[RMDB]
Structure probing data (DMS and 2A3) for a 177-nucleotide construct. Reactivities are given for positions 27 through 126. For DMS, 2,334 sequencing reads were counted. Conditions: 150 mM KOAc, 10 mM MgCl2 and 150 mM bicine (pH 8.5), 24 C. Source: RMDB library M2PK50, as collected in RNAgym. For DMS the reverse transcriptase was MarathonRT.
RNA sequence: GGGAACGACUCGAGUAGAGUCGAAAAUCUCAAAGCUUCGGCUUUGAGACAGUAAGGGAAACCGAUUAUUCCGGUCGACUCCGGAGAUACAAAGUCAAAUAAGAACGUUAGGCUUCGGCCUAACGAAACAUGUCUAACUCUUCGGAGUUAGACAUGUAAAAGAAACAACAACAACAAC
Reactivity to DMS in 0.01 (KOAc 150mM, MgCl2 10mM, bicine 150mM(pH8.5), 24C), signal-to-noise 3, nucleotides 027 to 126: u000c010u020c000a000a010a010g020c000u000u010c220g020g010c010u010u000u000g000a020g000a010c120a070g020u010a110a110g010g010g010a080a140a190c040c040g000a140u010u000a110u020u010c010c000g000g000u000c020g010a050c010u010c000c000g000g000a030g020a080u000a220c170a000a020a000g010u020c010a130a070a110u020a080a130g000a110a150c010g010u010u000a000g010g010c000u000u020c220g040g000c020c000u010a000a000c000g010a050a070
Reactivity to 2A3 in 0.01 (KOAc 150mM, MgCl2 10mM, bicine 150mM(pH8.5), 24C), signal-to-noise 3, nucleotides 027 to 126: u010c000u000c000a010a000a000g030c020u080u170c220g090g000c000u010u000u000g010a010g000a010c000a010g150u130a100a160g020g010g060a040a020a040c030c020g020a030u100u070a230u240u040c000c040g000g010u010c020g020a010c090u040c300c010g040g000a030g020a010u070a030c020a000a040a000g020u050c070a010a060a110u130a080a060g100a140a040c010g000u000u000a000g000g010c010u030u030c230g080g000c000c000u000a000a000c000g000a010a010